The record gives the reactivity of an RNA of 177 nucleotides to DMS and 2A3. The reactions ran in a buffer of 150 mM KOAc, 10 mM MgCl2 and 150 mM bicine (pH 8.5), at 24 C. DMS adducts were read by reverse transcription with MarathonRT.
[RMDB]
RNA sequence: GGGAACGACUCGAGUAGAGUCGAAAAGGCGCGGGGUCGGAUGCUCCUCGCCAUGGAUGCGCAGGAUCGGCUGUUCCCAGGGCGUUUCCUGUUCCAGGCGCAACAGCCAGGCGCUCGCCAGCGGCGACGACCGGGUAUAUUUCGAUAUACCCGGUCGAAAAGAAACAACAACAACAAC
Reactivity to DMS in 0.01 (KOAc 150mM, MgCl2 10mM, bicine 150mM(pH8.5), 24C), signal-to-noise 3, nucleotides 027 to 126: g020g030c030g060c190g020g000g010g040u010c060g010g000a090u020g000c050u000c020c050u000c000g020c010c010a060u010g000g000a130u010g020c040g000c020a090g020g000a100u010c080g010g010c020u010g000u000u010c030c010c020a160g000g010g000c040g000u000u010u010c100c070u010g030u000u000c020c010a070g000g020c300g020c090a080a040c030a070g000c020c020a070g000g000c020g010c030u000c110g010c010c020a070g000c150g020g010c020g020a090
Reactivity to 2A3 in 0.01 (KOAc 150mM, MgCl2 10mM, bicine 150mM(pH8.5), 24C), signal-to-noise 2, nucleotides 027 to 126: g030g000c000g000c030g010g040g010g030u110c070g170g020a090u240g040c000u000c020c000u020c010g000c000c010a010u010g060g030a040u110g020c050g000c020a040g060g210a130u140c100g050g000c020u020g020u040u030c000c010c010a000g040g020g010c040g050u070u280u230c040c050u120g030u190u110c060c010a030g040g000c060g000c110a020a040c000a030g020c010c010a030g090g000c010g000c020u040c060g050c050c000a100g070c090g100g030c030g000a030